[RMDB]
RNA sequence: GGGAACGACUCGAGUAGAGUCGAAAAGUGGAGUUUUCUCUCUCCCAGUCCUGGAACAGGGUCACACCCUGAGGAGAAGCAUCAGAGAAUGGGACUGAGUCAUAAAACACAUACGUUCGCGUAUGUGCUUAGACUCACUGUUCGCAGUGAGUCUAAGAAAAGAAACAACAACAACAAC
Reactivity to DMS in 0.01 (KOAc 150mM, MgCl2 10mM, bicine 150mM(pH8.5), 24C), signal-to-noise 4, nucleotides 027 to 126: g020u010g020g000a040g000u000u020u000u000c000u000c010u000c020u000c000c000c010a110g010u000c000c020u000g020g010a080a110c030a020g000g010g020u000c230a130c130a300c010c010c000u000g000a120g010g010a050g010a060a050g020c160a080u000c060a030g000a110g020a080a050u010g010g020g010a070c050u000g000a060g030u010c100a070u000a050a030a080a190c000a010c000a010u000a000c000g030u000u010c260g010c010g020u000a000u000g010u000g010
Reactivity to 2A3 in 0.01 (KOAc 150mM, MgCl2 10mM, bicine 150mM(pH8.5), 24C), signal-to-noise 3, nucleotides 027 to 126: g120u150g020g010a040g020u000u080u150u000c020u000c000u000c010u010c040c010c000a000g030u000c020c010u030g040g020a070a060c020a020g000g000g080u070c050a070c010a030c090c000c000u000g010a050g010g090a100g020a060a040g050c030a090u100c020a010g090a000g070a220a140u140g030g000g060a020c060u060g010a010g080u040c050a070u100a190a100a040a040c010a000c000a000u000a010c010g000u000u060c140g000c000g100u010a010u020g000u000g010
This 177-nucleotide RNA was probed chemically with DMS and 2A3. 2A3 adducts were read by reverse transcription with SuperScript II with manganese. The reactions ran in a buffer of 150 mM KOAc, 10 mM MgCl2 and 150 mM bicine (pH 8.5), at 24 C. For 2A3, 3,063 sequencing reads were counted.